This 207-nucleotide RNA was probed chemically with 2A3 and DMS. Conditions: 150 mM KOAc, 10 mM MgCl2 and 150 mM bicine (pH 8.5), 24 C. Source: RMDB library OK3TST, as collected in RNAgym. For DMS, 2,198 sequencing reads were counted. 2A3 is a SHAPE reagent: it acylates the 2'-hydroxyl of flexible nucleotides of all four kinds.
RNA sequence: GGGAACGACUCGAGUAGAGUCGAAAAUGAUUUCGUCAUCUCAAUACAACGGAACACAUGGGUCGACUGUUUCAUUCGUAACAGCGGAUCCGGGAAAUGUUGCAUCUUACAAAAAGUUUGUGAUUAAUGUUGGUAAUUGGGCAGGAUACGGCUCGGGCCCUAGGCAAUUAUUCGUAAUUGCCUAGGGAAAAGAAACAACAACAACAAC
Reactivity to 2A3 in 0.01 (KOAc 150mM, MgCl2 10mM, bicine 150mM(pH8.5), 24C), signal-to-noise 2, nucleotides 027 to 156: u140g020a040u040u080u090c040g060u060c000a180u040c050u020c060a030a040u130a070c030a080a000c050g100g030a100a010c070a030c050a270u160g000g030g000u000c010g130a240c050u000g080u000u050u050c120a140u170u200c180g110u070a010a030c010a000g030c010g170g040a010u020c010c000g000g000g000a060a080a010u070g010u030u010g000c040a050u020c020u060u120a110c140a040a090a000a020a120g030u060u040u040g050u070g040a070u050u130a200a150u140g020u040u030g010g030u070a100a080u040u050g020g000g000c060a050g000g100a040u040a110c030g050g000c000u000c010g030g000g050
Reactivity to DMS in 0.01 (KOAc 150mM, MgCl2 10mM, bicine 150mM(pH8.5), 24C), signal-to-noise 1, nucleotides 027 to 156: u020g030a180u000u000u000c050g070u020c070a120u000c060u030c100a060a140u000a090c020a030a030c060g000g000a060a010c050a060c050a060u000g010g030g080u000c030g010a040c000u000g000u000u000u000c080a200u010u010c170g010u000a110a010c000a030g020c040g020g000a030u000c020c000g030g000g000a090a090a120u000g010u000u000g030c050a080u020c040u010u030a280c060a060a080a090a100a050g010u010u000u020g030u000g000a070u000u000a030a150u000g030u030u000g030g020u000a080a170u000u000g010g000g000c040a040g000g010a170u000a050c090g010g040c060u000c020g000g000g000